[RMDB]
RNA sequence: GGGAACGACUCGAGUAGAGUCGAAAAGAUAAUGCGGGUAAUCCGCAGACGAUCCUCAUGGGUAAGUAGAUUGAGGUAAUUAUGCGCCAGCUCGUUACUGAGAAUAUUCGUGCCGUCAUUAAUCCGCAGUGAGCAUAUAGUUCGCUAUAUGCUCACUAAAAGAAACAACAACAACAAC
Reactivity to DMS in 0.01 (KOAc 150mM, MgCl2 10mM, bicine 150mM(pH8.5), 24C), signal-to-noise 8, nucleotides 027 to 126: g000a120u030a070a100u000g010c000g000g020g020u040a120a110u040c010c020g010c000a020g000a090c140g010a090u010c010c030u000c080a080u020g000g000g020u010a060a090g020u010a060g010a130u000u000g010a150g000g010u010a050a050u010u020a080u020g010c020g010c080c110a080g000c010u000c120g000u000u010a070c060u000g000a140g010a070a100u020a080u010u000c040g010u000g000c030c020g000u010c060a070u020u010a070a090u020c010c030g020c200
Reactivity to 2A3 in 0.01 (KOAc 150mM, MgCl2 10mM, bicine 150mM(pH8.5), 24C), signal-to-noise 7, nucleotides 027 to 126: g040a020u150a110a070u090g010c030g000g010g050u080a120a110u130c000c000g000c010a000g000a010c020g030a040u050c010c020u030c010a030u070g060g000g050u160a120a060g060u050a050g080a190u030u090g030a040g030g010u030a050a060u110u110a060u110g030c010g000c020c010a030g010c030u010c020g060u070u070a070c030u080g020a010g030a100a060u130a060u160u070c020g020u070g010c020c010g020u030c000a010u010u090a090a080u040c020c010g020c060